An RNA of 177 nucleotides, treated with DMS and 2A3 and read out base by base.
[RMDB]
RNA sequence: GGGAACGACUCGAGUAGAGUCGAAAACGGUACCGCCCUCCUUGGUCGGCUCCGCCUACUCGGCGGUCGGCAGUGGAGAGGAAUCAAAAACUAGUCCCAGUUGGCAGUGCGACACACACGGAGAGCAACAUAGAUGAAGAUUCGUCUUCAUCUAUGUAAAAGAAACAACAACAACAAC
Reactivity to DMS in 0.01 (KOAc 150mM, MgCl2 10mM, bicine 150mM(pH8.5), 24C), signal-to-noise 9, nucleotides 027 to 126: c140g000g010u010a060c070c070g010c060c030c010u000c010c010u010u060g020g010u000c000g010g000c070u020c070c030g010c010c010u010a130c230u020c140g010g020c020g010g000u010c010g000g000c020a040g000u010g000g000a050g010a110g000g010a090a060u020c120a060a060a080a100a060c080u010a100g000u000c010c000c010a110g010u010u010g000g000c040a050g010u010g010c020g000a070c080a060c060a080c060a060c050g000g010a090g010a110g010c120a150
Reactivity to 2A3 in 0.01 (KOAc 150mM, MgCl2 10mM, bicine 150mM(pH8.5), 24C), signal-to-noise 9, nucleotides 027 to 126: c040g030g050u070a040c020c020g030c010c000c000u010c010c000u040u070g100g000u030c000g010g020c070u070c040c020g020c000c000u170a260c140u080c140g010g000c010g000g010u010c010g010g000c010a040g020u040g030g020a030g010a090g020g030a030a050u120c080a020a070a050a010a040c030u050a030g050u030c000c000c010a010g040u060u050g040g010c030a030g020u040g080c020g040a010c010a000c000a000c000a010c090g040g030a060g000a000g060c020a010
The data come from the RNA Mapping Database (RMDB), libraries RFM100 and RFMREP. Reactivities are given for positions 27 through 126. The reactions ran in a buffer of 150 mM KOAc, 10 mM MgCl2 and 150 mM bicine (pH 8.5), at 24 C. For 2A3 the reverse transcriptase was SuperScript II with manganese.